An RNA of 177 nucleotides, treated with 2A3 and DMS and read out base by base. The DMS profile rests on 45,423 reads.

[RMDB]
RNA sequence: GGGAACGACUCGAGUAGAGUCGAAAAUGUCUAUUGUCACAUCCGAAGAUGGCACAACCCGGCGCACCGAGACCAAGGUAUGGCCAGGCCCAGGCAGUGGGUGGGUGAGCAGGGCCAGGCUGCUGCAAUCCAUACACUAAUUCGUUAGUGUAUGGAUAAAAGAAACAACAACAACAAC
Reactivity to 2A3 in 0.01 (KOAc 150mM, MgCl2 10mM, bicine 150mM(pH8.5), 24C), signal-to-noise 9, nucleotides 027 to 126: u110g030u010c030u060a150u060u150g060u070c030a030c020a130u030c030c030g030a050a020g070a080u080g030g000c030a030c020a050a080c020c010c000g020g010c040g000c010a030c020c020g060a050g050a100c020c030a050a040g070g010u100a100u180g040g000c000c020a020g020g000c000c000c010a020g070g000c030a040g030u150g030g030g060u190g020g010g020u080g030a020g010c040a050g010g000g000c010c000a010g030g000c000u040g020c020u050g020c020a030
Reactivity to DMS in 0.01 (KOAc 150mM, MgCl2 10mM, bicine 150mM(pH8.5), 24C), signal-to-noise 9, nucleotides 027 to 126: u010g010u000c040u010a090u010u010g010u000c060a090c070a080u000c060c050g010a090a090g010a080u000g010g000c050a050c100a090a090c040c020c020g000g010c050g010c070a070c030c020g000a110g010a100c080c070a070a100g010g010u010a070u010g010g010c000c010a100g000g010c010c010c010a120g010g010c080a070g010u010g000g000g020u010g000g000g010u000g010a100g010c060a110g000g010g000c020c020a060g010g010c020u000g010c070u000g000c130a120